[RMDB]
This 177-nucleotide RNA was probed chemically with DMS and 2A3.
2A3 adducts were read by reverse transcription with SuperScript II with manganese.

RNA sequence: GGGAACGACUCGAGUAGAGUCGAAAAACAUACGCCCUACCUUGGAAUAAAAGGAAGUAACUUAAAUUCAGACACACAGCUCCAUCCAAGAUUACACUGGAUCUAAGGAGAGAGUAGGCGUAGGCGGGAGCAAAAUACCAUUCGUGGUAUUUUGCUCAAAAGAAACAACAACAACAAC
Reactivity to DMS in 0.01 (KOAc 150mM, MgCl2 10mM, bicine 150mM(pH8.5), 24C), signal-to-noise 2, nucleotides 027 to 126: a120c080a170u000a040c020g020c050c010c020u000a070c020c010u010u010g000g020a190a080u000a080a120a090a070g030g020a110a140g020u010a060a100c030u000u000a040a070a060u000u000c020a040g000a220c140a050c120a070c090a090g010c060u000c030c020a090u000c060c050a050a070g020a080u000u010a080c160a100c070u010g000g020a020u000c110u010a030a060g000g000a120g010a090g000a080g020u000a010g000g000c010g000u000a000g010g030c080g010g000
Reactivity to 2A3 in 0.01 (KOAc 150mM, MgCl2 10mM, bicine 150mM(pH8.5), 24C), signal-to-noise 3, nucleotides 027 to 126: a000c020a020u080a010c010g010c000c020c010u010a020c010c010u040u040g100g070a130a030u140a150a190a040a000g060g040a150a030g100u080a070a010c040u050u050a040a040a100u180u040c030a050g070a110c010a010c010a000c030a150g000c020u010c010c000a050u020c020c010a040a030g020a060u060u150a060c130a030c050u060g000g010a010u020c030u110a080a060g050g010a030g030a010g020a010g020u070a020g030g010c030g020u010a020g070g070c090g060g080